[RMDB]
RNA sequence: GGGAACGACUCGAGUAGAGUCGAAAAAUUAGUUCUUUCAUAGUUCACAUUCAUAUGAUCAUUGCACAUAUCUUUUUACCUGCAAUAUACGCAGUAUGCUGAAAAAAAAAUGGUCACAACAGGUAAAAUUUUACGGGAGGUUCGCCUCCCGUAAAAUAAAAGAAACAACAACAACAAC
Reactivity to DMS in 0.01 (KOAc 150mM, MgCl2 10mM, bicine 150mM(pH8.5), 24C), signal-to-noise 1, nucleotides 027 to 126: a040u010u020a070g040u000u010c040u010u050u050c000a060u000a020g000u000u000c040a030c080a080u040u010c070a180u000a110u000g000a000u010c020a010u010u000g000c110a090c100a010u000a080u010c000u000u010u020u000u010a030c120c050u000g000c030a070a110u000a120u010a070c240g020c000a090g020u000a010u000g000c010u000g000a000a000a000a000a050a170a190a120a080u020g020g000u000c070a020c170a050a080c140a000g000g000u000a020a010a060
Reactivity to 2A3 in 0.01 (KOAc 150mM, MgCl2 10mM, bicine 150mM(pH8.5), 24C), signal-to-noise 2, nucleotides 027 to 126: a000u090u070a040g010u070u000c000u060u180u000c050a110u130a080g080u100u110c050a010c000a220u110u180c070a050u060a040u210g040a080u060c030a010u000u120g000c130a030c000a030u020a090u180c110u040u130u140u120u080a040c010c000u010g000c010a040a090u060a010u020a300c150g010c020a030g010u150a080u020g060c050u100g210a100a000a000a000a000a000a040a040a040u000g120g050u000c000a030c020a120a060c010a070g190g000u080a110a110a000
This 177-nucleotide RNA was probed chemically with DMS and 2A3. It was measured as part of the RMDB library OK1LIB. High 2A3 reactivity points to a flexible backbone, as in loops and unpaired stretches. The DMS profile rests on 1,713 reads. Reactivities are rounded to 0.1 and cut off at 0 and 3. DMS (dimethyl sulfate) methylates the pairing face of unpaired adenines and cytosines. The reactions ran in a buffer of 150 mM KOAc, 10 mM MgCl2 and 150 mM bicine (pH 8.5), at 24 C.